Conditions: 150 mM KOAc, 10 mM MgCl2 and 150 mM bicine (pH 8.5), 24 C. The record gives the reactivity of an RNA of 207 nucleotides to 2A3 and DMS. Values are in units of 0.01, from 0 to 300, in steps of 10. 2A3 is a SHAPE reagent: it acylates the 2'-hydroxyl of flexible nucleotides of all four kinds.

[RMDB]
RNA sequence: GGGAACGACUCGAGUAGAGUCGAAAAUCAAGCAAAACCCCAAAACCUUACACUGAGAGCAUUUAGACUGAUUACUCUUUAAAUCAAAUCAGGCAAUAGAGAGAAACUCGAGAGGUGAAAACCCCACAUAACGAUCUAGGCUUCGGCCUAGAUCGAACAUUAACGUUUUGUUCGCAAAACGUUAAUGAAAAGAAACAACAACAACAAC
Reactivity to 2A3 in 0.01 (KOAc 150mM, MgCl2 10mM, bicine 150mM(pH8.5), 24C), signal-to-noise 4, nucleotides 027 to 156: u070c010a020a010g100c030a020a030a100a230c000c020c010c030a020a110a040a080c050c070u090u110a040c070a050c100u130g040a030g010a010g050c020a040u040u060u110a050g030a060c020u010g030a050u040u070a050c010u040c000u140u190u160a080a080a030u140c050a010a060a020u020c000a010g050g000c030a060a090u120a050g040a000g010a000g030a090a060a040c020u020c040g050a040g010a040g060g000u040g030a030a010a020a030c020c010c030c000a050c010a080u170a140a040c020g000a000u010c000u000a000g010g000c000u030u060c200g050g000c000c010u000a000g000a000u000c000g000a000a000
Reactivity to DMS in 0.01 (KOAc 150mM, MgCl2 10mM, bicine 150mM(pH8.5), 24C), signal-to-noise 2, nucleotides 027 to 156: u000c050a070a110g010c060a080a070a060a150c020c010c000c010a010a090a130a090c110c070u000u000a120c090a070c150u010g020a040g000a080g000c020a300u000u000u010a120g000a070c010u000g050a090u010u000a090c030u000c040u030u000u000a060a020a100u000c050a050a100a070u020c020a030g000g000c000a050a100u010a020g010a140g000a090g010a110a120a140c040u010c030g020a080g020a050g000g000u000g000a060a080a100a070c020c020c020c040a080c070a070u030a050a150c010g040a010u010c000u010a010g010g010c010u010u020c300g070g000c000c000u000a010g000a000u000c010g010a010a120